[RMDB]
RNA sequence: GGGAACGACUCGAGUAGAGUCGAAAAAAAGGCUUAUCAAGAGAGGUGGAGGGACUGCCCCGAUGAAACCCGGCAGCCAGAAAUGGUGCCCAUUCCUGCAGCGGAAACGUUGAAAGAUGAGCCGAAACUCAAGGAAUGAGUUCGCUCAUUCCUUGAGAAAAGAAACAACAACAACAAC
Reactivity to DMS in 0.01 (KOAc 150mM, MgCl2 10mM, bicine 150mM(pH8.5), 24C), signal-to-noise 1, nucleotides 027 to 126: a060a040a170g000g000c000u020u000a010u030c000a090a050g010a260g000a140g000g000u000g030g000a140g000g000g000a230c120u010g000c050c000c010c060g000a110u000g000a140a140a090c020c020c050g010g000c020a030g010c010c000a010g000a170a070a070u020g030g000u000g000c030c030c090a100u010u000c000c000u010g000c000a030g000c030g040g000a150a110a050c020g000u000u000g000a170a180a100g020a020u000g000a010g010c000c000g010a030a040a130